[RMDB]
RNA sequence: GGGAACGACUCGAGUAGAGUCGAAAAGGGGUCGGAGGAGCGUCCUUUGAUCGGUUGGCAAGGUCUGAAGCCUCCACGGACUGAUGACCCAACCGGGAGGACGCGAAUCCGACGGAGGCACCCAAAAUCCUAAUUGGGCUUCGGCCCAAUUAGGAAAGUCGUACAAUCAGUUCGCUGAUUGUACGACAAAAGAAACAACAACAACAAC
Reactivity to 2A3 in 0.01 (KOAc 150mM, MgCl2 10mM, bicine 150mM(pH8.5), 24C), signal-to-noise 1, nucleotides 027 to 156: g080g000g010g010u010c060g010g010a030g010g060a050g040c000g000u000c000c010u270u240u040g020a000u010c040g010g040u000u010g010g010c160a300a300g000g010u000c010u040g020a060a020g010c000c000u000c000c030a030c040g000g000a010c010u030g040a150u020g000a080c000c000c000a010a010c010c050g000g010g000a000g000g000a000c000g040c000g000a000a020u000c000c010g000a000c010g000g000a000g000g000c000a010c000c000c000a050a150a020a090u030c000c000u000a000a000u000u020g010g020g010c010u040u070c260g130g000c020c000c020a000a000u010u000a000g000g000a000a000a000
Chemical mapping of a 207-nucleotide RNA with 2A3. Conditions: 150 mM KOAc, 10 mM MgCl2 and 150 mM bicine (pH 8.5), 24 C. For 2A3, 1,167 sequencing reads were counted. Reactivities are given for positions 27 through 156. It was measured as part of the RMDB library RNAMAK.